[RMDB]
RNA sequence: GGGAACGACUCGAGUAGAGUCGAAAAUGUGACAGCAGUCACUGUCUGGCUGUCUGCCCUGGCUGUUUGUGUGUAUGUCUCUGACUGGGAGGUAGCUGCCUUCCCUCUGUGUGAGCUAGGAGGCUGGCAAAAGACCUAGCUUCGGCUAGGUCUUUUGAAAAGAAACAACAACAACAAC
Reactivity to DMS in 0.01 (KOAc 150mM, MgCl2 10mM, bicine 150mM(pH8.5), 24C), signal-to-noise 1, nucleotides 027 to 126: u000g020u010g010a050c020a050g010c070a070g000u010c040a080c120u010g000u010c070u010g010g020c040u000g010u010c030u000g000c020c000c020u020g000g000c030u000g020u000u000u000g010u000g040u000g020u010a050u010g020u000c020u000c060u000g000a120c110u000g000g020g000a080g000g000u000a110g020c090u000g000c020c020u000u000c040c040c040u010c040u010g020u010g000u020g010a030g020c110u000a150g000g000a090g000g030c030u010g000g020